Background: Chemical mapping of a 207-nucleotide RNA with 2A3. For 2A3, 1,910 sequencing reads were counted. 2A3 is a SHAPE reagent: it acylates the 2'-hydroxyl of flexible nucleotides of all four kinds.

RNA sequence: GGGAACGACUCGAGUAGAGUCGAAAACGGUUACGCCUUCUUUACCGUUAUCAAGGAAGGUACUCGGCCAUGCUAAGGGAAGCAUUAUUCCUUAGGCGCAUGUCGUCGCCAGCAUGGUGUGAGGGGAAAAAGUAUGCUGGGUUCGCCCAGCAUACAACAGGUGGUUUAUCUUCGGAUAAACCACCUGAAAAGAAACAACAACAACAAC
Reactivity to 2A3 in 0.01 (KOAc 150mM, MgCl2 10mM, bicine 150mM(pH8.5), 24C), signal-to-noise 3, nucleotides 027 to 156: c010g000g000u030u030a020c070g020c010c000u000u000c000u030u040u050a010c040c040g180u120u060a040u100c090a000a010g030g010a000a010g000g020u040a060c020u010c000g030g000c000c000a000u010g000c010u120a160a160g020g000g000a000a010g010c060a230u130u060a140u190u050c010c000u060u090a090g000g000c000g020c050a050u190g120u210c090g130u100c000g000c030c010a010g010c010a010u040g000g040u080g100u090g030a020g030g030g010g080a000a070a060a040a000g000u000a000u000g000c000u010g010g040g000u050u030c070g070c010c000c000a000g010c000a000u000a000c000a010a010